[RMDB]
RNA sequence: GGGAACGACUCGAGUAGAGUCGAAAACUGAGCGGGAUGAAAAAAUCAGACAAAUAUCCAAGUUAUGAGUAAUUACUUUGUUGGAAGGAGGGAGCAGAGCAUAAGGAAAUUCUUAAAACUGUUAUGUGUCUACUUUAAACUUCGGUUUAAAGUAGACAAAAGAAACAACAACAACAAC
Reactivity to DMS in 0.01 (KOAc 150mM, MgCl2 10mM, bicine 150mM(pH8.5), 24C), signal-to-noise 2, nucleotides 027 to 126: c050u000g000a080g030c110g000g000g000a040u030g000a000a060a140a070a050a060u020c030a050g000a030c070a110a060a050u040a090u000c030c010a040a070g000u000u000a040u000g000a020g000u010a120a060u020u040a050c100u030u050u010g000u000u000g020g000a110a160g030g010a130g000g000g000a030g020c130a070g000a080g030c110a110u030a070a070g010g010a030a040a180u000u000c090u010u000a020a040a030a100c140u000g000u010u010a050u000g000u000
Reactivity to 2A3 in 0.01 (KOAc 150mM, MgCl2 10mM, bicine 150mM(pH8.5), 24C), signal-to-noise 4, nucleotides 027 to 126: c020u020g010a020g020c030g020g020g030a040u080g110a060a010a020a030a000a060u120c030a020g070a100c040a010a100a030u150a060u070c030c020a030a030g020u070u070a090u140g040a030g040u120a050a110u030u070a030c010u080u060u100g040u020u060g040g030a060a050g030g010a020g000g030g000a020g010c030a010g020a010g060c010a020u060a080a010g020g060a010a060a060u100u030c040u070u040a070a080a050a070c050u050g020u120u080a080u130g100u030